[RMDB]
This 207-nucleotide RNA was probed chemically with 2A3 and DMS. The reactions ran in a buffer of 150 mM KOAc, 10 mM MgCl2 and 150 mM bicine (pH 8.5), at 24 C. Source: RMDB library ARCHII, as collected in RNAgym. Reactivities are given for positions 27 through 156. For DMS, 2,364 sequencing reads were counted.
RNA sequence: GGGAACGACUCGAGUAGAGUCGAAAAAUGGAGUGAGAGGAGGAGUCCUGGCUGAUUCUUGGCGGUGGAGACCGAGCGUCCAGGCCAAGCGUGGCGUCGACAAGGCGUCGGGACAGGAGUGUCGCCGGCACCUGGUCGCAUAAUGAGGGGCGUACGGCACAUUCCUAGUGUUCGCACUAGGAAUGUGAAAAGAAACAACAACAACAAC
Reactivity to 2A3 in 0.01 (KOAc 150mM, MgCl2 10mM, bicine 150mM(pH8.5), 24C), signal-to-noise 4, nucleotides 027 to 156: a000u150g010g010a040g020u080g030a100g020a020g010g050a020g020g010a010g020u030c020c030u040g050g000c040u040g030a100u120u010c030u050u060g040g000c030g000g140u070g010g040a050g040a030c010c010g030a030g010c030g030u000c020c010a020g080g000c010c010a080a030g060c040g130u120g040g000c020g030u160c000g020a020c010a040a020g000g010c010g000u000c000g000g000g000a010c010a020g040g110a160g190u080g010u020c120g110c210c000g020g010c000a050c000c010u010g030g000u010c010g010c050a030u130a130a060u160g080a060g010g000g010g000c000g000u030a050c030g010g000
Reactivity to DMS in 0.01 (KOAc 150mM, MgCl2 10mM, bicine 150mM(pH8.5), 24C), signal-to-noise 1, nucleotides 027 to 156: a160u010g000g030a120g000u020g000a110g020a000g030g000a120g000g000a090g000u000c030c020u000g000g010c060u020g060a100u010u000c050u020u030g050g000c010g030g040u020g030g000a130g010a100c040c000g000a300g000c000g020u010c010c030a200g040g000c040c000a040a080g000c060g060u010g030g020c080g000u000c010g000a020c040a050a050g000g010c040g080u000c000g040g010g000a040c000a070g020g000a180g020u000g030u000c020g000c020c010g040g020c010a030c000c000u010g010g020u000c020g030c080a090u030a020a070u000g050a130g000g020g040g010c060g010u000a070c060g000g000